[RMDB]
Conditions: 150 mM KOAc, 10 mM MgCl2 and 150 mM bicine (pH 8.5), 24 C. The record gives the reactivity of an RNA of 207 nucleotides to DMS and 2A3. For 2A3 the reverse transcriptase was SuperScript II with manganese. DMS adducts were read by reverse transcription with MarathonRT. Source: RMDB library OK3TST, as collected in RNAgym.
RNA sequence: GGGAACGACUCGAGUAGAGUCGAAAAAGAUCGACAUGGCCAGGUCCUUGAAGAUACCGGCCAUGCGGCACGUUGACCUGCGCACGUUAGUCAUCUGCUUCUCGGAGCUAGCGGCGACGGAAUUGAUGGCGUAGGCGGUUAGUUGCGUAGCGUCUCGGAACUGAUUUAAAUUCGUUUAAAUCAGUUCAAAAGAAACAACAACAACAAC
Reactivity to DMS in 0.01 (KOAc 150mM, MgCl2 10mM, bicine 150mM(pH8.5), 24C), signal-to-noise 2, nucleotides 027 to 156: a070g010a020u010c000g060a130c000a030u010g010g020c020c000a060g030g010u000c010c020u020u010g020a170a110g000a300u000a030c020c000g020g040c010c030a000u000g000c010g050g000c030a050c100g000u010u010g000a050c010c000u010g010c000g030c020a160c040g000u010u000a050g030u000c020a090u000c010u000g010c070u000u000c040u000c080g020g000a250g030c010u000a070g030c120g020g060c040g020a140c030g030g020a060a080u020u010g020a070u010g010g010c020g050u000a040g010g030c020g000g000u000u010a110g020u000u000g020c010g010u000a300g020c100g020u000c010u000c060g000
Reactivity to 2A3 in 0.01 (KOAc 150mM, MgCl2 10mM, bicine 150mM(pH8.5), 24C), signal-to-noise 2, nucleotides 027 to 156: a000g040a190u040c000g100a100c040a010u000g000g000c030c040a050g010g000u010c030c040u180u220g100a140a030g010a090u090a120c020c000g010g000c000c000a000u000g000c000g000g000c010a000c110g090u100u080g030a040c000c010u010g010c010g000c000a050c070g000u030u060a050g030u030c010a020u010c000u010g070c150u140u000c130u120c150g050g000a050g020c040u110a030g110c070g150g020c000g020a020c000g000g050a050a060u090u170g040a060u070g050g000c020g040u030a130g090g030c000g000g000u090u110a110g000u030u140g000c000g030u020a040g020c020g070u020c030u030c110g000